[RMDB]
RNA sequence: GGGAACGACUCGAGUAGAGUCGAAAAGUGAUUAUCGCAGCCAUGACUACGUUGGCCAGAAACGUUGCAGCGUUUAAACACCUAAGAGGGAACCCUGUGACCCUCUACGGCUAACCUGAAUGGACCGCAGUAACGACUCAUUCGUGAGUCGUUACUGAAAAGAAACAACAACAACAAC
Reactivity to DMS in 0.01 (KOAc 150mM, MgCl2 10mM, bicine 150mM(pH8.5), 24C), signal-to-noise 2, nucleotides 027 to 126: g020u020g000a100u010u020a020u000c000g000c030a080g000c030c040a070u010g000a150c150u000a070c200g000u010u010g010g010c040c090a130g000a040a090a050c050g000u000u000g000c080a090g020c060g010u010u000u000a070a060a060c120a060c150c090u010a070a020g010a050g020g000g030a190a080c040c050c040u020g010u000g010a120c000c030c010u000c000u010a080c130g010g030c010u000a000a060c040c090u000g010a180a050u010g000g010a060c090c050g010